[RMDB]
RNA sequence: GGGAACGACUCGAGUAGAGUCGAAAAGAUAUGGAGGCGCUCGAUAAGAAGAUAUCGGAAACGAUAUACUUCUUUUGACGAGCGCUCCUAAGUCAAACUCAUCCGAAUGUUCGCAUUCGGAUGAGAACUAUGAGAUAUCCUUCGGGAUAUCUCAUAGAAAAGAAACAACAACAACAAC
Reactivity to DMS in 0.01 (KOAc 150mM, MgCl2 10mM, bicine 150mM(pH8.5), 24C), signal-to-noise 4, nucleotides 027 to 126: g000a030u000a280u010g000g010a030g020g030c000g020c000u000c000g010a130u010a010a010g010a010a010g000a070u000a000u010c010g010g000a090a080a150c000g000a000u000a010u000a080c000u000u000c000u000u000u000u010g010a180c100g000a010g000c000g000c010u000c000c000u000a040a140g000u010c020a110a100a240c010u000c000a000u000c000c000g000a020a000u000g010u000u000c230g020c010a010u000u010c000g000g000a010u000g000a000g000a020a100
Reactivity to 2A3 in 0.01 (KOAc 150mM, MgCl2 10mM, bicine 150mM(pH8.5), 24C), signal-to-noise 3, nucleotides 027 to 126: g020a000u050a040u150g010g030a040g230g300c000g020c010u010c020g090a120u070a240a020g000a000a010g000a000u010a000u000c010g020g000a070a050a030c030g000a000u000a010u050a220c000u030u050c000u030u030u030u040g060a040c010g000a000g000c000g000c000u020c000c000u000a040a000g020u020c040a090a020a130c000u000c000a000u000c000c000g000a010a000u020g020u090u120c300g010c160a000u000u000c000g010g000a000u000g000a000g010a010a010